[RMDB]
RNA sequence: GGGAACGACUCGAGUAGAGUCGAAAAGUGUCGUUUACCUAUAUCCCAUUAUCAGCGGUUAUUUUAGGGCUUGAUCCAGUACGUUUGCCGAUAGACGGGCGUAUCCCCGUGUAUAGAAAGGGCGAUGUAGUUGUGGUGUUAAACGAUCAAACUACAGCAUUUAAUGCGGAUUCGUCCGCAUUAAAUGAAAAGAAACAACAACAACAAC
Reactivity to DMS in 0.01 (KOAc 150mM, MgCl2 10mM, bicine 150mM(pH8.5), 24C), signal-to-noise 4, nucleotides 027 to 156: g030u000g010u000c020g000u000u000u010a090c050c030u000a140u000a110u010c040c000c020a220u000u000a110u000c090a090g010c070g020g030u000u000a080u000u000u000u010a090g020g000g010c030u000u010g010a090u000c030c040a150g010u010a040c050g000u010u010u000g040c010c010g020a120u000a080g010a020c020g020g050g020c050g000u000a060u020c080c020c000c030g030u000g030u000a070u000a080g020a100a060a090g010g010g030c000g000a050u000g020u000a090g020u000u010g030u010g010g020u000g010u000u000a030a090a040c030g000a070u010c050a060a050a050c040u000a050c050a090g000
Reactivity to 2A3 in 0.01 (KOAc 150mM, MgCl2 10mM, bicine 150mM(pH8.5), 24C), signal-to-noise 5, nucleotides 027 to 156: g060u040g040u010c000g000u010u060u070a270c030c020u050a060u020a040u230c000c010c010a060u130u120a100u100c060a010g040c030g080g060u080u090a130u060u180u060u120a090g040g010g060c030u020u060g010a020u070c020c020a030g020u060a030c030g000u020u070u180g030c000c000g010a010u000a060g060a020c000g000g050g000c090g060u080a090u120c010c000c000c000g000u050g040u020a100u000a050g140a020a100a020g040g010g000c030g020a030u030g010u010a030g010u030u090g110u050g140g030u070g020u060u150a060a130a040c040g010a020u070c060a040a020a020c010u050a050c020a010g030
The record gives the reactivity of an RNA of 207 nucleotides to DMS and 2A3. It was measured as part of the RMDB library OK3TST. For 2A3, 2,851 sequencing reads were counted.